[RMDB]
Structure probing data (DMS and 2A3) for a 177-nucleotide construct. High 2A3 reactivity points to a flexible backbone, as in loops and unpaired stretches. The reactions ran in a buffer of 150 mM KOAc, 10 mM MgCl2 and 150 mM bicine (pH 8.5), at 24 C.
RNA sequence: GGGAACGACUCGAGUAGAGUCGAAAACGAAGUGGCACGUGUACCCGUUGGGGUAGCGCUGCAGGUAGUCCUGGUGCUCGGGUUCGGCUUCCCAGAAAUCCCCGGCCGGGCUGACCUCGGUCACCACGACCUGAUCCUAAUUCGUUAGGAUCAGGUCAAAAGAAACAACAACAACAAC
Reactivity to DMS in 0.01 (KOAc 150mM, MgCl2 10mM, bicine 150mM(pH8.5), 24C), signal-to-noise 2, nucleotides 027 to 126: c040g020a160a120g000u030g010g080c020a070c060g050u020g030u000a040c000c000c020g020u080u030g010g010g010g000u010a120g010c000g030c150u020g030c010a070g000g000u020a050g000u020c050c050u000g000g000u000g000c030u020c050g010g000g010u010u020c000g020g040c100u000u000c010c020c000a200g000a020a180a100u010c020c000c000c000g000g000c000c030g020g000g000c030u000g010a100c080c010u010c050g000g000u020c010a070c050c090a110c200
Reactivity to 2A3 in 0.01 (KOAc 150mM, MgCl2 10mM, bicine 150mM(pH8.5), 24C), signal-to-noise 8, nucleotides 027 to 126: c050g030a120a020g100u140g060g020c030a020c030g050u170g160u120a040c000c010c020g100u160u300g110g020g000g000u030a020g030c020g010c080u060g000c010a010g010g090u070a030g030u050c010c010u080g030g060u050g010c030u020c030g020g000g000u110u050c010g050g030c100u040u020c000c000c000a000g050a030a080a030u070c010c010c000c000g010g000c000c010g030g000g000c030u090g070a070c000c010u010c010g000g010u030c020a030c070c010a040c110